[RMDB]
RNA sequence: GGGAACGACUCGAGUAGAGUCGAAAACAGUUCUGCAUGACUGAAAUGGAGCAUAUGAGUCUGCGAGAGACAGGUUGCUCUGUGGCAGCCAGAGGAAGCAGAGAGAGACAAGGAAAGUUCAGAUCUCCAGAAGCCUUGGAUGUCACGCUCAUGGGUAAAUAGGUGAAAAUUUCGAUUUUCACCUAUUAAAAGAAACAACAACAACAAC
Reactivity to 2A3 in 0.01 (KOAc 150mM, MgCl2 10mM, bicine 150mM(pH8.5), 24C), signal-to-noise 5, nucleotides 027 to 156: c020a010g030u050u060c030u100g030c030a070u120g010a030c020u050g050a020a070a170u120g050g000a010g010c040a050u060a090u230g030a040g050u060c030u060g040c090g050a140g020a020g000a070c040a050g060g030u070u050g020c000u000c080u090g020u020g010g000c000a010g010c020c010a070g020a020g130g020a050a020g060c110a020g020a000g010a020g010a000g010a060c050a070a050g110g040a210a170a010g060u050u020c020a030g020a230u000c010u000c020c000a040g040a130a050g030c000c000u010u020g010g010a000u010g030u030c000a000c020g010c010u020c010a040u080g050g000g030u080a000
Reactivity to DMS in 0.01 (KOAc 150mM, MgCl2 10mM, bicine 150mM(pH8.5), 24C), signal-to-noise 4, nucleotides 027 to 156: c040a120g020u010u010c030u010g000c030a170u000g020a100c040u000g010a090a100a110u010g000g010a080g020c020a090u000a090u000g000a220g010u000c010u000g010c070g000a160g010a090g030a050c040a100g010g010u010u010g010c010u000c020u000g020u000g010g030c020a040g030c020c010a060g000a110g030g000a080a160g010c050a080g010a100g020a100g020a220g010a100c050a090a180g020g020a100a090a160g000u000u000c050a120g010a210u000c020u000c020c030a150g000a130a170g010c020c010u010u000g020g000a100u000g000u000c030a030c040g000c000u000c030a080u000g020g030g030u000a060